[RMDB]
RNA sequence: GGGAACGACUCGAGUAGAGUCGAAAAAAACCAUCGAAUUGCGGGGACGCCCUUAGAGCUUCACGUACGGCCAAUCGUUCGAAAGGAUUGAUUUGGCAUCAGGUUAAUGGCCUCGAGUAUCGUAAUAACCGUGAAGAUUGGGUAAUCCGCAGCCAAGGCAGCGGUAAGGGUUCGCCCUUACCGCUGCAAAAGAAACAACAACAACAAC
Reactivity to 2A3 in 0.01 (KOAc 150mM, MgCl2 10mM, bicine 150mM(pH8.5), 24C), signal-to-noise 1, nucleotides 027 to 156: a000a000a000c060c010a130u180c120g130a140a130u150u010g010c000g000g000g000g000a010c050g040c050c020c010u030u170a100g000a120g180c000u010u000c000a000c000g000u010a010c000g010g000c010c000a000a000u020c000g000u050u000c000g040a050a000a020g120g000a030u060u300g080a000u150u140u170g050g010c000a000u000c000a000g000g000u010u030a010a030u020g000g000c000c020u030c100g010a000g000u070a190u300c000g000u000a000a010u000a000a000c030c020g000u000g000a000a000g000a000u070u160g000g000g000u040a000a060u000c000c010g000c000a000g000c000c000a010a000g090